[RMDB]
RNA sequence: GGGAACGACUCGAGUAGAGUCGAAAAGCGUGUUUCAUUAUGAAGCAAGUCAAGUUUAAUGAUCUUGUAAAAAACAUUAAAGUACAAAUAAAUGCAAGCAAUAUAGUUUCAUUUAGUUCAAAACGUUUAGUCUCUUUUGCAUAAGCAAAAUGUGUUACAAUAAAGGAAUCUUCGGAUUCCUUUAUUGAAAAGAAACAACAACAACAAC
Reactivity to DMS in 0.01 (KOAc 150mM, MgCl2 10mM, bicine 150mM(pH8.5), 24C), signal-to-noise 2, nucleotides 027 to 156: g030c020g020u000g020u020u000u000c020a280u010u000a190u010g030a070a030g030c000a010a020g040u010c010a020a020g020u000u000u000a020a040u000g020a130u010c000u000u000g010u000a000a020a060a040a040a030c010a000u000u000a080a080a160g030u020a130c040a050a080a060u000a040a010a030u010g000c270a040a030g010c020a070a090u000a140u000a160g000u000u000u000c020a040u010u000u010a060g030u000u000c060a050a060a110a070c070g000u000u000u010a110g010u000c010u000c020u000u000u000u000g000c000a090u000a090a080g000c070a040a010a030a080u020g030u000g010u000u000a130
Reactivity to 2A3 in 0.01 (KOAc 150mM, MgCl2 10mM, bicine 150mM(pH8.5), 24C), signal-to-noise 3, nucleotides 027 to 156: g040c040g010u010g000u030u030u040c030a060u020u250a060u300g020a010a010g000c040a030a020g110u080c020a000a020g000u020u040u080a010a010u010g020a060u020c000u010u040g050u120a040a060a070a000a020a020c020a020u020u020a100a090a020g020u060a060c040a090a150a050u060a030a050a000u080g020c030a020a040g000c010a050a020u160a060u030a270g050u030u010u050c010a010u060u050u070a020g040u020u170c040a050a070a030a020c030g010u040u080u080a050g020u000c020u000c000u050u050u010u010g010c020a080u040a300a060g010c010a010a000a030a080u090g040u010g010u060u060a040
This 207-nucleotide RNA was probed chemically with DMS and 2A3. 2A3 adducts were read by reverse transcription with SuperScript II with manganese. Conditions: 150 mM KOAc, 10 mM MgCl2 and 150 mM bicine (pH 8.5), 24 C. It was measured as part of the RMDB library ARCHII. Values are in units of 0.01, from 0 to 300, in steps of 10. For DMS the reverse transcriptase was MarathonRT. Reactivities are given for positions 27 through 156. The DMS profile rests on 2,983 reads.